[RMDB]
RNA sequence: GGGAACGACUCGAGUAGAGUCGAAAACGUCGCCCCAUUCACUGUUAGGGCAUCAGUGGUUUGGGGGUUGGGUGGAGAAGGGCUCCCGUAGAACCCAUGACGCGGCGACUGCGCCAGCUCGCGUCGUGAAUCGUGGGAAAUUUGCCGCCAGGGUCCGCGGACCUAGGUAAUUCGUUACCUAGGUCCGAAAAGAAACAACAACAACAAC
Reactivity to 2A3 in 0.01 (KOAc 150mM, MgCl2 10mM, bicine 150mM(pH8.5), 24C), signal-to-noise 1, nucleotides 027 to 156: c130g060u120c120g110c040c000c000c000a020u060u010c000a000c010u000g030u030u160a200g020g140g020c040a020u050c010a020g030u030g040g190u110u040u030g000g000g010g020g070u100u070g060g000g030u140g030g040a140g000a000a100g090g000g000c000u030c040c010c010g010u030a050g010a140a070c040c040c020a010u010g020a010c010g000c000g050g000c000g090a090c080u080g030c020g100c020c020a000g020c020u050c040g000c000g040u020c030g000u010g020a120a130u000c000g000u070g000g080g000a030a070a120u150u130u110g060c030c020g000c000c000a010g000g000g000u000c010c020g000